[RMDB]
RNA sequence: GGGAACGACUCGAGUAGAGUCGAAAAUCUGCUCUCUAUCAUCGGCUGCUCUCCGAAUGCUGGUGGAAACGGAUCCCAUCCCUCAUAUCAUAGUAGAUGUGCGCAAGCCGGAGGAUGUGAGCUACAGUAAGUGAAAAACGUUCGCGUUUUUCACUUAAAAAGAAACAACAACAACAAC
Reactivity to 2A3 in 0.01 (KOAc 150mM, MgCl2 10mM, bicine 150mM(pH8.5), 24C), signal-to-noise 1, nucleotides 027 to 126: u030c010u040g030c010u010c000u000c080u150a050u080c030a000u030c000g020g030c000u030g020c000u030c030u030c020c060g090a090a040u120g000c060u070g020g070u020g060g040a050a060a000c040g050g000a070u010c030c000c020a050u110c020c000c020u000c000a060u070a060u130c020a020u050a140g080u070a040g030a140u140g040u010g050c060g020c050a110a030g000c000c000g010g000a020g080g000a000u040g000u020g030a010g010c020u030a000c000a040g120
Reactivity to DMS in 0.01 (KOAc 150mM, MgCl2 10mM, bicine 150mM(pH8.5), 24C), signal-to-noise 3, nucleotides 027 to 126: u000c070u000g010c020u000c000u000c030u030a050u000c020a070u000c030g010g010c020u000g010c040u000c050u000c040c040g010a140a110u010g000c100u010g020g020u000g010g000a030a080a080c160g000g010a060u000c040c020c010a190u000c010c030c040u000c050a110u010a040u000c030a100u000a140g020u010a100g020a100u000g010u000g020c260g040c080a060a080g010c010c020g020g000a100g000g000a050u000g000u000g010a060g010c060u000a030c230a060g000
An RNA of 177 nucleotides, treated with 2A3 and DMS and read out base by base. The 2A3 profile rests on 1,221 reads. For 2A3 the reverse transcriptase was SuperScript II with manganese. It was measured as part of the RMDB library OK2TRN.